[RMDB]
RNA sequence: GGGAACGACUCGAGUAGAGUCGAAAAGAUAUGGAGCAGAUGUGAACAACAGCACAUGGUCGGAAACGACCAUUGUGACAUGUUUGCGCUGCUCCUAAGUCAAAAGAGCGUAGUUCGCUACGCUCAAGAUCCUACAUAACUUCGGUUAUGUAGGAUCAAAAGAAACAACAACAACAAC
Reactivity to DMS in 0.01 (KOAc 150mM, MgCl2 10mM, bicine 150mM(pH8.5), 24C), signal-to-noise 6, nucleotides 027 to 126: g000a040u000a300u010g000g000a030g020c000a000g010a060u010g040u000g000a010a020c000a070a060c290a200g010c000a000c010a020u000g000g000u000c000g030g010a070a050a120c000g010a010c000c000a000u010u010g010u000g010a030c070a300u000g000u000u000u000g010c010g000c000u000g000c000u000c000c000u000a000a030g000u010c030a100a080a100a110g020a010g000c000g010u000a000g010u000u020c230g000c000u000a010c010g010c000u000c000a030a060
Reactivity to 2A3 in 0.01 (KOAc 150mM, MgCl2 10mM, bicine 150mM(pH8.5), 24C), signal-to-noise 7, nucleotides 027 to 126: g010a000u060a010u090g000g010a000g000c010a000g260a300u100g070u020g030a010a030c110a080a030c060a290g020c000a020c000a010u010g000g000u000c000g010g040a040a040a030c010g000a000c030c010a010u020u120g010u000g080a020c010a090u300g000u000u000u000g020c020g000c000u000g000c000u000c000c000u000a000a000g000u000c010a030a010a060a200g010a000g000c000g000u000a000g020u040u070c250g010c170u000a000c000g000c000u000c000a000a000